[RMDB]
RNA sequence: GGGAACGACUCGAGUAGAGUCGAAAAUUAAACCUUCCAUCCAUCCAAUAAGACUGACUCAGUCAAUAAGGAUGGAUGGUGGAUCCCAAUAAGACUGAGUCAGUCAGAAAAGCGGAAACGCAAAAAACGAAGUAAAUUGGUUCGCCAAUUUACUUCGAAAAGAAACAACAACAACAAC
Reactivity to DMS in 0.01 (KOAc 150mM, MgCl2 10mM, bicine 150mM(pH8.5), 24C), signal-to-noise 1, nucleotides 027 to 126: u040u000a100a090a250c130c010u010u000c010c000a020u000c030c000a000u000c010c010a190a230u020a050a110g000a000c000u000g000a020c070u000c000a040g000u000c020a110a120u020a040a040g010g040a010u000g000g000a000u000g000g000u000g000g000a120u000c000c000c000a090a150u020a040a120g000a010c000u000g000a000g000u000c000a020g030u000c030a110g000a040a120a100a090g040c000g000g000a100a060a140c010g020c000a000a010a120a050a050a210